The record gives the reactivity of an RNA of 207 nucleotides to 2A3 and DMS. The RNA was probed in 150 mM KOAc, 10 mM MgCl2 and 150 mM bicine (pH 8.5) at 24 C. For 2A3, 1,441 sequencing reads were counted. The DMS profile rests on 1,637 reads. For DMS the reverse transcriptase was MarathonRT.

RNA sequence: GGGAACGACUCGAGUAGAGUCGAAAAGGAUCUGAGUACUUAUAAGUGCGAAGUGAGUGAGGGUCUUACGAGCACUAAUUACACCCCUCUAUUAAGUAUCGAAGAUCGGCCGGAGAUCGAGAUACAACUAUUAUCCGGCGACUGUACGAAGAUCCGAGCGGAUACUACUAUUCGUAGUAGUAUCCGCAAAAGAAACAACAACAACAAC
Reactivity to 2A3 in 0.01 (KOAc 150mM, MgCl2 10mM, bicine 150mM(pH8.5), 24C), signal-to-noise 3, nucleotides 027 to 156: g010g000a010u030c000u050g020a000g010u000a000c030u090u070a070u060a300a030g000u020g000c000g010a070a000g010u020g000a000g000u090g010a000g010g010g010u150c000u000u000a010c020g000a000g000c000a010c060u060a150a070u150u180a080c050a180c070c020c000c010u000c000u000a190u090u190a220a090g000u000a000u000c000g010a040a000g010a020u010c040g100g000c000c000g010g000a020g000a000u010c020g000a000g000a080u000a020c000a050a000c010u090a030u300u030a060u020c000c000g010g000c000g040a080c060u080g000u000a000c000g000a020a010g010a000u000c000c010g000a000
Reactivity to DMS in 0.01 (KOAc 150mM, MgCl2 10mM, bicine 150mM(pH8.5), 24C), signal-to-noise 1, nucleotides 027 to 156: g000g000a010u000c000u070g000a300g060u000a010c000u020u000a120u000a050a070g020u000g010c020g010a230a270g010u010g020a050g050u010g000a230g000g010g010u000c060u000u010a080c050g000a300g010c060a040c030u000a060a070u000u000a050c070a080c060c000c000c020u020c010u000a170u000u010a060a140g040u000a000u000c010g010a140a140g000a030u000c040g000g010c070c080g030g000a110g000a040u020c070g000a300g030a150u010a070c030a060a080c140u000a060u000u000a170u010c000c000g000g070c020g010a170c060u010g010u010a090c000g010a280a040g000a030u000c000c000g040a090